Conditions: 150 mM KOAc, 10 mM MgCl2 and 150 mM bicine (pH 8.5), 24 C.
Structure probing data (DMS and 2A3) for a 177-nucleotide construct.
The 2A3 profile rests on 3,537 reads.
[RMDB]
RNA sequence: GGGAACGACUCGAGUAGAGUCGAAAAUCGCCUGGAUGUCAGCAACGCGAGCAGGUCCGCGCACACCUGCUCGUCUUCGCGCCAGUAGCGGUCCAGAUAGAGCAGCCGAUCGUCAUACAGGUGCAGCCCAGUGUUCAGGGUUCGCCCUGAACACUGGAAAAGAAACAACAACAACAAC
Reactivity to DMS in 0.01 (KOAc 150mM, MgCl2 10mM, bicine 150mM(pH8.5), 24C), signal-to-noise 2, nucleotides 027 to 126: u020c070g000c010c000u020g000g000a050u000g020u000c140a060g060c000a090a100c300g000c000g020a000g050c000a000g000g000u000c040c140g000c030g010c030a070c150a070c040c000u000g000c030u000c000g020u010c050u000u000c210g000c000g010c040c060a110g000u010a040g040c060g000g020u020c020c090a100g010a190u050a010g020a090g010c080a070g000c040c090g100a060u000c030g000u010c060a070u000a100c130a040g000g050u030g000c020a100g020c010
Reactivity to 2A3 in 0.01 (KOAc 150mM, MgCl2 10mM, bicine 150mM(pH8.5), 24C), signal-to-noise 3, nucleotides 027 to 126: u070c010g030c010c000u060g040g030a100u090g100u260c080a040g000c040a080a020c040g000c000g000a000g010c000a000g000g030u000c050c090g010c010g020c020a020c000a000c040c000u000g000c000u000c000g000u000c000u000u020c020g030c010g020c000c000a010g000u040a020g040c030g000g010u010c010c000a020g030a050u190a020g100a050g040c050a010g040c060c010g010a080u060c020g070u010c060a040u030a160c030a050g000g060u010g040c010a050g000c010